[RMDB]
RNA sequence: GGGAACGACUCGAGUAGAGUCGAAAAAUAGUAAAUUACCAGUAAAAAAAUUCAAAACAAAACCUAAGCACUGAUCAUACGGCCCACGCUGUACACAACUUCAGAUUGGUGUAGCUCUUGAAGUUUAGAUGAUACUCAUAUUCGUAUGAGUAUCAUCAAAAGAAACAACAACAACAAC
Reactivity to 2A3 in 0.01 (KOAc 150mM, MgCl2 10mM, bicine 150mM(pH8.5), 24C), signal-to-noise 3, nucleotides 027 to 126: a000u110a050g020u030a170a010a060u050u030a080c010c010a000g080u150a020a120a070a070a050a050a150u240u270c050a010a140a090a080c030a040a130a030a020c060c040u070a070a000g060c000a000c060u030g000a020u030c040a030u030a010c000g040g000c000c040c020a030c080g020c020u040g060u110a020c070a020c020a080a180c040u130u130c020a010g000a160u000u020g040g000u010g010u010a030g040c030u050c030u100u100g050a080a030g040u090u060u110a020
Reactivity to DMS in 0.01 (KOAc 150mM, MgCl2 10mM, bicine 150mM(pH8.5), 24C), signal-to-noise 2, nucleotides 027 to 126: a110u000a130g010u000a050a100a070u030u000a140c040c040a070g000u030a000a020a080a110a070a120a070u010u000c040a020a050a070a090c060a090a070a150a050c090c030u020a090a070g000c090a060c060u010g000a030u000c050a110u000a060c070g000g020c020c020c160a050c220g000c080u000g000u000a030c140a090c130a080a060c080u010u000c070a020g000a060u010u020g000g000u010g010u010a070g030c090u000c090u010u010g000a060a060g000u010u000u010a070
Source information: Structure probing data (2A3 and DMS) for a 177-nucleotide construct. Conditions: 150 mM KOAc, 10 mM MgCl2 and 150 mM bicine (pH 8.5), 24 C.